This 177-nucleotide RNA was probed chemically with DMS and 2A3. Conditions: 150 mM KOAc, 10 mM MgCl2 and 150 mM bicine (pH 8.5), 24 C. Source: RMDB library M2PK90, as collected in RNAgym. For 2A3, 4,518 sequencing reads were counted.
RNA sequence: GGGAACGACUCGAGUAGAGUCGAAAAUAUUAGGGUGUGAGAGUAUCUCUCUCCCAGCCGGUUCGCGCAGCCAUCUUUUUCGACUUUUCUUGGGUUAGCUGCGCGAACUGGCUGGCGUUCCCAGCAAACAUGAGCAUCUAUUCGUAGAUGCUCAUGUAAAAGAAACAACAACAACAAC
Reactivity to DMS in 0.01 (KOAc 150mM, MgCl2 10mM, bicine 150mM(pH8.5), 24C), signal-to-noise 2, nucleotides 027 to 126: u000a040u010u000a160g000g010g010u000g000u000g000a020g010a040g030u010a120u000c110u000c000u000c020u000c030c010c010a010g010c010c000g000g020u000u000c010g020c010g020c000a010g000c010c120a030u010c010u000u000u000u000u000c050g020a060c070u010u010u020u000c130u010u010g020g000g020u000u010a040g020c030u000g010c020g000c000g010a000a000c000u000g010g000c010u000g010g000c010g000u000u000c000c000c000a190g020c250a100a070
Reactivity to 2A3 in 0.01 (KOAc 150mM, MgCl2 10mM, bicine 150mM(pH8.5), 24C), signal-to-noise 3, nucleotides 027 to 126: u110a020u070u070a030g000g020g000u020g000u010g010a000g010a010g030u290a300u110c040u020c000u010c000u030c050c010c020a000g010c000c010g010g000u010u000c010g020c000g000c000a010g000c030c030a110u050c120u000u130u040u040u050c030g030a050c040u080u190u190u120c070u210u240g090g010g000u090u100a010g000c010u010g000c000g000c000g000a000a000c000u000g000g000c000u000g000g000c000g000u000u010c010c000c000a000g070c040a030a180